This 207-nucleotide RNA was probed chemically with 2A3. High 2A3 reactivity points to a flexible backbone, as in loops and unpaired stretches.
RNA sequence: GGGAACGACUCGAGUAGAGUCGAAAAAUCAGAGGGCGCUAUCAUGCAAACUAGGAUUGUCUGCUCAUGCACAGAACCACCUACCGAUAACUAACAGUGCAUGAAGGUUAGUUAUUCCAUAUUAAUUAAAACUCGUAAUUCUUCGGAAUUACGAGAACGCUAACGAGAUCUUCGGAUCUCGUUAGCGAAAAGAAACAACAACAACAAC
Reactivity to 2A3 in 0.01 (KOAc 150mM, MgCl2 10mM, bicine 150mM(pH8.5), 24C), signal-to-noise 1, nucleotides 027 to 156: a020u070c050a020g010a060g070g010g000c140g040c020u060a110u300c170a110u190g000c020a000a010a040c050u050a010g000g060a060u060u000g030u070c030u040g010c010u000c000a010u000g000c000a000c000a010g020a160a110c020c010a040c050c000u090a110c000c100g040a000u000a010a000c000u000a000a000c000a020g040u000g040c000a000u010g020a020a040g120g000u000u010a000g000u000u010a010u050u090c010c010a030u140a060u280u190a230a080u160u070a010a110a050a070c000u000c000g000u000a000a000u000u000c000u000u010c180g080g000a000a000u030u000a000c010g000a000g010a000a000
About this RNA
The data come from the RNA Mapping Database (RMDB), library M2RFOK. 2A3 adducts were read by reverse transcription with SuperScript II with manganese.